[RMDB]
RNA sequence: GGGAACGACUCGAGUAGAGUCGAAAAGGAUGGAGUUUCUAUAAAGCAUUUACCCUAUCUGUUAUCACCUAACGCAAGUUAUCCACCAUCCAAGCGUCGAAACUGUAUGAAAACAAGGUUUUAGUUUAUUCAGUGAAUAGUUCGCUAUUCACUGAAUAAAAGAAACAACAACAACAAC
Reactivity to 2A3 in 0.01 (KOAc 150mM, MgCl2 10mM, bicine 150mM(pH8.5), 24C), signal-to-noise 2, nucleotides 027 to 126: g010g000a010u030g000g030a080g080u020u110u000c090u050a210u120a100a140a060g040c020a000u060u140u160a060c000c010c000u020a070u080c050u060g050u040u060a040u130c020a030c080c040u030a050a000c020g020c030a020a070g010u030u030a040u030c000c010a030c020c010a040u000c000c020a030a020g020c020g050u050c010g050a050a030a010c030u100g020u160a090u090g170a000a190a000a050c030a030a050g070g000u000u000u030u070a040g000u060u000u000
Reactivity to DMS in 0.01 (KOAc 150mM, MgCl2 10mM, bicine 150mM(pH8.5), 24C), signal-to-noise 2, nucleotides 027 to 126: g000g020a040u000g000g010a140g030u000u010u000c030u000a050u010a070a030a220g010c030a050u010u010u010a090c030c010c010u000a080u000c060u000g000u000u000a100u020c060a110c090c100u000a070a050c070g020c110a060a100g010u000u000a060u010c010c020a110c010c040a020u000c040c050a090a100g020c040g000u000c100g000a070a060a030c040u000g000u000a060u000g000a080a020a060a100c150a090a130g010g000u000u000u000u000a070g010u000u000u000
Chemical mapping of a 177-nucleotide RNA with 2A3 and DMS. Conditions: 150 mM KOAc, 10 mM MgCl2 and 150 mM bicine (pH 8.5), 24 C. It was measured as part of the RMDB library RFMREP. For 2A3 the reverse transcriptase was SuperScript II with manganese. DMS adducts were read by reverse transcription with MarathonRT. For DMS, 1,057 sequencing reads were counted.